[RMDB]
RNA sequence: GGGAACGACUCGAGUAGAGUCGAAAAGGAGACGCUGAAGACGCCCUUUAGGGGGCGUCCGAGUCAUCAAUGAGACACCACCCUUUGAAACUGGAGGAUCUAACCCUGAGCCGUGAAUCCGGCCAGAGCAUAGGUAUAACUUCGGUUAUACCUAUGCAAAAGAAACAACAACAACAAC
Reactivity to 2A3 in 0.01 (KOAc 150mM, MgCl2 10mM, bicine 150mM(pH8.5), 24C), signal-to-noise 1, nucleotides 027 to 126: g090g000a040g000a020c020g010c140u040g050a040a010g000a000c010g000c000c000c030u000u010u110a240g000g000g040g000g000c010g000u010c000c010g020a010g000u000c010a050u040c000a070a200u170g040a020g020a050c020a050c020c010a040c010c020c010u080u080u120g160a160a110a020c050u070g020g020a020g030g030a030u010c020u040a050a100c030c000c000u020g010a010g000c010c000g010u040g100a030a010u040c030c010g000g000c000c000a020g010a010
Reactivity to DMS in 0.01 (KOAc 150mM, MgCl2 10mM, bicine 150mM(pH8.5), 24C), signal-to-noise 3, nucleotides 027 to 126: g010g000a120g020a030c030g000c080u010g000a180a110g000a020c000g010c000c000c000u000u000u000a160g020g000g020g000g000c000g000u000c000c000g000a120g010u010c020a060u010c050a070a090u010g000a130g000a080c040a090c050c020a090c040c020c040u010u020u010g000a070a090a110c130u010g000g010a180g000g000a160u010c060u000a080a110c020c010c010u000g010a130g010c010c000g020u000g000a090a150u010c220c010g000g000c030c030a110g010a090
Chemical mapping of a 177-nucleotide RNA with 2A3 and DMS. It was measured as part of the RMDB library RFMREP. The DMS profile rests on 2,703 reads. 2A3 adducts were read by reverse transcription with SuperScript II with manganese. The RNA was probed in 150 mM KOAc, 10 mM MgCl2 and 150 mM bicine (pH 8.5) at 24 C. Reactivities are given for positions 27 through 126.